[RMDB]
RNA sequence: GGGAACGACUCGAGUAGAGUCGAAAAGUCUCCAAGAGAGCUUGGCCGUCGGGCCUUACACCCCGACUUGCUGAGUUUCUCUAGGAGAGUCCCUUUCCCAGCCAGAGGUGGCUGGUCAAACAAUACCAAAACUCUUGCUAGUUCGCUAGCAAGAGAAUCCAUAAUACAGCUUCGGCUGUAUUAUGGAAAAAGAAACAACAACAACAAC
Reactivity to 2A3 in 0.01 (KOAc 150mM, MgCl2 10mM, bicine 150mM(pH8.5), 24C), signal-to-noise 1, nucleotides 027 to 156: g010u000c010u010c010c000a000a000g000a000g000a000g010c000u000u000g020g000c000c000g000u000c000g000g030g010c000c050u080u070a070c050a030c020c000c000c000g000a010c040u080u170g010c000u010g010a000g030u040u300u010c010u000c000u000a000g000g000a000g000a000g010u020c000c000c000u020u100u030c010c000c000a010g030c000c000a000g000a010g050g010u000g000g000c000u090g030g040u180c060a000a010a040c050a050a010u020a010c010c010a010a090a110a170c000u010c000u000u000g000c000u000a010g010u080u020c170g030c090u000a000g010c010a000a000g000a000g020a000a060
Reactivity to DMS in 0.01 (KOAc 150mM, MgCl2 10mM, bicine 150mM(pH8.5), 24C), signal-to-noise 1, nucleotides 027 to 156: g010u010c010u000c030c020a130a150g000a060g010a100g020c010u010u010g020g020c020c300g020u000c060g020g040g050c090c080u000u000a190c160a150c300c000c010c000g030a030c010u000u000g000c000u010g000a070g010u000u000u000c000u000c020u000a210g010g010a060g020a060g030u000c020c010c030u010u010u010c100c000c000a000g020c010c000a050g010a300g020g000u000g000g000c010u020g000g000u000c100a000a010a090c110a070a040u010a110c030c030a020a150a140a120c010u000c000u000u000g030c000u000a000g010u000u000c240g000c020u000a010g030c000a010a010g000a020g010a020a020